[RMDB]
RNA sequence: GGGAACGACUCGAGUAGAGUCGAAAAAAAGAUAUGGAGUAAGACAUGACCGAAAGUGGCGUUGAAAGAAGCUCGGAAACGAGCUUCUGGAGCCAUGAGUAGGUCAACAGCUUACUCCUAAGUCAAAGACAUGGAGAAAGUUCGCUUUCUCCAUGUCAAAAGAAACAACAACAACAAC
Reactivity to DMS in 0.01 (KOAc 150mM, MgCl2 10mM, bicine 150mM(pH8.5), 24C), signal-to-noise 1, nucleotides 027 to 126: a100a140a080g000a000u010a300u000g000g010a010g010u000a000a020g020a080c040a260u000g000a000c020c000g020a080a060a300g000u000g000g020c000g020u000u010g030a190a100a030g000a010a040g010c000u000c000g000g020a070a110a140c030g000a000g000c000u000u000c000u000g000g000a090g000c000c000a000u000g000a060g000u000a100g000g000u000c010a000a000c210a180g050c000u010u010a020c010u000c000c010u000a000a110g060u000c000a050a230a170